[RMDB]
RNA sequence: GGGAACGACUCGAGUAGAGUCGAAAAAUCAGAUGUCUAGAUAAGAUAGGAAAGGUAACUUUAUCACAGCUGUGUGACCCAUGAUGGCCUAGGUAGCUGAGUGAACCAGAAGUCUGAACUUGGAAACUAAGUUGUAAAGUUCUUAUGAACUUCCUAGCACGUUUAGAGUUUUCGAACUCUAAACGUGAAAAGAAACAACAACAACAAC
Reactivity to DMS in 0.01 (KOAc 150mM, MgCl2 10mM, bicine 150mM(pH8.5), 24C), signal-to-noise 1, nucleotides 027 to 156: a130u000c010a040g010a050u000g000u010c030u000a120g000a090u020a060a030g020a080u000a140g040g020a080a080a100g060g040u000a030a050c060u000u000u000a160u010c080a070c060a070g030c020u000g000u000g050u010g020a120c040c070c030a120u010g010a120u020g040g020c050c040u010a080g020g030u000a010g000c030u000g000a090g000u000g000a030a100c060c000a100g000a080a160g000u010c090u000g040a010a100c040u020u010g060g020a110a080a170c070u000a040a190g010u000u010g020u000a070a100a090g000u000u010c020u000u020a150u010g010a040a010c040u020u000c010c030u010a120g030
Reactivity to 2A3 in 0.01 (KOAc 150mM, MgCl2 10mM, bicine 150mM(pH8.5), 24C), signal-to-noise 2, nucleotides 027 to 156: a000u040c050a010g060a050u040g020u060c060u130a040g040a080u180a120a050g010a090u040a070g030g050a110a060a030g020g010u070a110a070c040u110u090u090a120u130c020a030c030a050g050c020u040g000u050g030u070g190a080c000c000c010a050u170g050a040u090g050g030c020c030u020a030g030g000u020a000g020c010u020g010a020g070u080g020a020a020c030c010a060g060a070a000g100u030c100u190g030a090a090c020u060u030g050g030a020a010a000c020u020a260a020g040u000u000g080u080a040a000a060g000u010u000c010u040u220a230u280g000a050a060c020u050u020c000c000u010a010g060

Chemical mapping of a 207-nucleotide RNA with DMS and 2A3. For 2A3, 730 sequencing reads were counted. Values are in units of 0.01, from 0 to 300, in steps of 10. 2A3 is a SHAPE reagent: it acylates the 2'-hydroxyl of flexible nucleotides of all four kinds. For 2A3 the reverse transcriptase was SuperScript II with manganese. The data come from the RNA Mapping Database (RMDB), library OK3TST. For DMS, 1,851 sequencing reads were counted. The RNA was probed in 150 mM KOAc, 10 mM MgCl2 and 150 mM bicine (pH 8.5) at 24 C.